[RMDB]
RNA sequence: GGGAACGACUCGAGUAGAGUCGAAAACGAACCCCGCGGUUCGGAGCCGUUGAAACCCAACGGUUUCCUGCCGUUGGCGCAGACCACUACGCCAUACCAAAUCUAUGACGCGUUCGUCGAUGUCACGCUUCUAAGUGCAGUUCGCUGCACUUAGAAGAAAAGAAACAACAACAACAAC
Reactivity to DMS in 0.01 (KOAc 150mM, MgCl2 10mM, bicine 150mM(pH8.5), 24C), signal-to-noise 3, nucleotides 027 to 126: c110g030a090a150c040c000c020c080g000c000g000g000u000u000c300g010g000a020g000c000c000g000u020u010g020a070a300a140c300c240c000a030a010c030g000g000u010u010u010c000c010u020g000c000c000g000u000u000g000g000c010g010c150a050g000a060c080c160a040c040u000a090c040g000c000c040a040u010a120c090c000a050a150a070u020c120u000a110u020g000a040c030g020c060g000u000u010c090g030u020c090g020a100u030g000u000c070a080c200g010
Reactivity to 2A3 in 0.01 (KOAc 150mM, MgCl2 10mM, bicine 150mM(pH8.5), 24C), signal-to-noise 9, nucleotides 027 to 126: c040g010a010a040c000c000c000c010g000c010g010g010u040u080c070g010g010a000g000c000c000g000u010u010g050a110a060a060c020c010c000a000a000c000g000g000u030u100u040c000c000u010g000c000c000g030u020u080g010g000c040g000c040a030g020a080c020c010a070c130u070a020c020g030c010c000a030u080a090c050c070a090a070a060u070c040u090a070u130g040a050c050g010c020g040u050u050c040g040u040c030g050a060u090g040u060c020a010c110g030
An RNA of 177 nucleotides, treated with DMS and 2A3 and read out base by base. The 2A3 profile rests on 14,241 reads. 2A3 adducts were read by reverse transcription with SuperScript II with manganese. It was measured as part of the RMDB library OK1LIB.